RNA sequence: GGGAACGACUCGAGUAGAGUCGAAAAGGCCAAGGUGGUGAUCAAUAACCUUUACAAGCACACCCAGCUGCAGACCAGCUUUGGCGCCAACAUGCUAGCGAUCGUCGACGGGGUGCCGCGCACGCUGAGGUAUAUAUCAUUUCGAUGAUAUAUACCUAAAAGAAACAACAACAACAAC
Reactivity to 2A3 in 0.01 (KOAc 150mM, MgCl2 10mM, bicine 150mM(pH8.5), 24C), signal-to-noise 9, nucleotides 027 to 126: g080g000c010c010a020a020g050g020u060g020g050u060g040a090u100c070a090a120u150a140a080c010c000u050u080u100a120c110a110a030g030c020a020c000a020c050c010c010a020g020c020u040g010c030a040g040a150c030c010a020g060c000u080u050u080g040g000c030g030c010c010a060a060c030a070u160g050c030u080a040g020c010g110a110u080c040g100u050c020g040a090c030g030g000g000g020u020g020c010c020g020c010g000c010a020c020g040c030u060g060
Reactivity to DMS in 0.01 (KOAc 150mM, MgCl2 10mM, bicine 150mM(pH8.5), 24C), signal-to-noise 9, nucleotides 027 to 126: g010g010c020c020a050a060g010g010u010g010g010u010g010a070u030c120a080a100u030a120a150c080c040u010u020u010a090c160a090a080g010c040a070c120a120c040c010c040a110g010c040u010g000c080a080g010a070c050c030a070g010c030u010u010u010g000g000c010g010c050c040a060a080c120a060u020g010c050u010a070g000c040g000a080u020c050g020u010c020g000a090c050g000g000g000g010u000g000c040c030g000c040g020c050a040c060g010c040u010g000